Chemical mapping of a 177-nucleotide RNA with DMS and 2A3. Source: RMDB library TTRINS, as collected in RNAgym. Values cover nucleotides 27 to 126. For DMS, 855 sequencing reads were counted.
RNA sequence: GGGAACGACUCGAGUAGAGUCGAAAAGAUAUGGAUUCGUAGUCUACCCACCGUACGAUCAUCUUGGAUUUAGUUUCGGAAACGAAACUUGUCAGAUGCAGAGUACGAGGACUACGAAUCCUAAGUCCUGAUGAGGUAACUUCGGUUACCUCAUCAGAAAAGAAACAACAACAACAAC
Reactivity to DMS in 0.01 (KOAc 150mM, MgCl2 10mM, bicine 150mM(pH8.5), 24C), signal-to-noise 1, nucleotides 027 to 126: g000a160u010a170u000g010g000a010u000u000c020g010u000a000g020u000c010u000a060c060c050c190a300c110c030g000u000a010c000g000a170u000c010a000u000c000u010u020g050g000a020u010u000u000a000g010u000u000u010c000g010g000a160a160a270c010g020a000a000a010c000u000u000g000u000c000a020g000a010u010g000c160a000g000a300g000u000a000c010g000a070g010g000a000c000u000a000c020g000a030a010u010c000c000u000a040a120g000u000c050
Reactivity to 2A3 in 0.01 (KOAc 150mM, MgCl2 10mM, bicine 150mM(pH8.5), 24C), signal-to-noise 2, nucleotides 027 to 126: g150a110u250a160u300g000g020a030u020u000c000g000u000a030g000u030c010u120a300c110c010c090a030c020c010g000u000a010c020g010a090u010c030a010u040c030u200u300g300g000a090u300u300u280a100g020u020u000u020c070g010g050a100a000a060c020g000a030a000a000c040u000u030g010u090c030a000g040a020u010g040c240a010g000a020g120u020a000c020g000a070g010g030a000c030u010a010c000g000a000a000u000c000c000u000a080a060g160u130c010